The record gives the reactivity of an RNA of 177 nucleotides to 2A3. For 2A3 the reverse transcriptase was SuperScript II with manganese.

RNA sequence: GGGAACGACUCGAGUAGAGUCGAAAACGUAGGUGCCCAACCCGAACGGUGUCUGGUCGGUGUCGCCGUGCACCACCUCGAUGUCGUCGGGCGCAAUCCCCAGCUCCUCGGCGACGAUCUGCGCGAAGGUCAGCAGGUUAUUCGUAACCUGCUGACCAAAAGAAACAACAACAACAAC
Reactivity to 2A3 in 0.01 (KOAc 150mM, MgCl2 10mM, bicine 150mM(pH8.5), 24C), signal-to-noise 3, nucleotides 027 to 126: c060g060u060a030g070g040u050g000c000c030c040a070a050c010c000c000g060a060a020c010g010g000u020g020u050c030u090g040g020u060c130g030g000u030g010u020c060g030c210c020g030u120g000c000a020c030c020a010c010c040u080c120g030a030u120g010u040c010g010u000c000g000g000g020c030g000c000a010a130u060c000c000c000c010a010g010c010u040c010c000u060c030g030g000c020g010a020c050g010a080u050c060u110g040c030g000c000g140a060a030
The reactions ran in a buffer of 150 mM KOAc, 10 mM MgCl2 and 150 mM bicine (pH 8.5), at 24 C. Values cover nucleotides 27 to 126.